Background: The data come from the RNA Mapping Database (RMDB), library RSTRND. An RNA of 207 nucleotides, treated with 2A3 and DMS and read out base by base. Values are in units of 0.01, from 0 to 300, in steps of 10. The RNA was probed in 150 mM KOAc, 10 mM MgCl2 and 150 mM bicine (pH 8.5) at 24 C. Reactivities are given for positions 27 through 156.
[RMDB]
RNA sequence: GGGAACGACUCGAGUAGAGUCGAAAAGUUCACAGACUAGAUGUCGGUGGGUCAUUAUCGAAAAUGGCUUAAGGUAUAGUCGGACCACAUGGGAGACCAUGAUGUGGUGAAUAAGGAGAUACCAUCUCCCCGAGCGCCACGGUGCGCUCAGUCGAGCGACUUUCUAUCUGUUCGCAGAUAGAAAGUCAAAAGAAACAACAACAACAAC
Reactivity to 2A3 in 0.01 (KOAc 150mM, MgCl2 10mM, bicine 150mM(pH8.5), 24C), signal-to-noise 5, nucleotides 027 to 156: g040u110u100c030a030c020a050g010a010c010u040a040g040a220u110g080u110c060g000g090u120g040g000g010u010c000a030u000u110a090u200c210g100a170a170a030a030u020g010g000c000u050u050a100a030g040g000u040a030u050a050g050u040c000g010g050a010c030c000a010c020a020u010g000g000g020a060g020a040c000c010a020u080g020a090u070g080u080g060g010u020g040a050a050u160a100a060g040g000a030g000a010u040a130c030c050a080u020c010u000c010c000c000c010g020a010g000c020g000c010c020a160c170g100g070u180g000c010g000c020u010c000a010g040u050c060g030a040g040c080
Reactivity to DMS in 0.01 (KOAc 150mM, MgCl2 10mM, bicine 150mM(pH8.5), 24C), signal-to-noise 2, nucleotides 027 to 156: g010u000u000c060a040c050a120g000a070c040u000a090g010a110u000g010u010c010g030g030u000g010g010g000u000c020a010u010u000a090u000c130g030a090a080a030a090u010g010g000c010u000u010a100a080g010g030u000a070u000a090g010u000c000g020g020a050c010c000a070c010a020u000g000g010g020a300g020a260c010c010a030u000g010a050u000g000u000g010g020u000g020a080a050u010a060a100g030g000a070g020a110u000a140c120c070a180u000c010u000c000c000c010c050g000a040g020c000g010c010c020a130c230g030g020u010g020c000g020c000u000c020a010g000u010c050g010a170g030c150